Structure probing data (2A3 and DMS) for a 207-nucleotide construct. For 2A3 the reverse transcriptase was SuperScript II with manganese. The DMS profile rests on 2,124 reads. The 2A3 profile rests on 3,435 reads.

RNA sequence: GGGAACGACUCGAGUAGAGUCGAAAACAUGUAGCACAGUAGUGCUACAUGCAGAUAGAUCGUGAGAUCUAUCAGAAUAAGUAGAGCAUAAGCCCGGCUCUACGUCAGCACGAAGACUCUGGUGACAGUGUCGACGUGCGGACAUAAAAGGGCGAAACCAGUAGGUGGUAUUCGUACCACCUACUGGAAAAGAAACAACAACAACAAC
Reactivity to 2A3 in 0.01 (KOAc 150mM, MgCl2 10mM, bicine 150mM(pH8.5), 24C), signal-to-noise 4, nucleotides 027 to 156: c000a000u000g000u000a020g030c000a000c060a130g300u300a040g000u100g000c000u000a000c000a010u000g000c000a010g000a000u000a000g000a000u000c010g010u050g080a030g000a020u000c010u000a000u000c020a010g100a060a070u280a150a000g000u000a000g000a000g000c010a010u030a220a040g000c010c000c000g000g000c010u010c000u010a010c000g000u000c010a010g000c000a000c000g000a000a000g000a010c010u000c000u070g040g020u100g090a070c000a000g000u000g000u010c000g000a010c000g000u010g000c010g000g010a000c010a000u200a040a060a040a040g010g000g000c030g020a050a010a020
Reactivity to DMS in 0.01 (KOAc 150mM, MgCl2 10mM, bicine 150mM(pH8.5), 24C), signal-to-noise 2, nucleotides 027 to 156: c010a070u000g000u000a000g110c040a010c010a300g070u010a140g020u030g010c000u000a000c010a000u000g000c040a120g010a020u010a010g000a000u000c000g020u000g000a250g010a000u000c000u000a010u000c020a060g020a230a100u000a030a260g060u010a050g010a010g020c060a100u000a060a300g010c060c000c010g020g020c000u000c000u000a020c000g000u000c010a050g040c010a000c010g010a030a300g010a040c010u000c020u000g000g000u020g010a300c040a040g030u000g030u000c000g000a260c000g050u000g010c000g000g020a020c030a120u000a060a050a110a070g070g220g000c020g010a100a110a140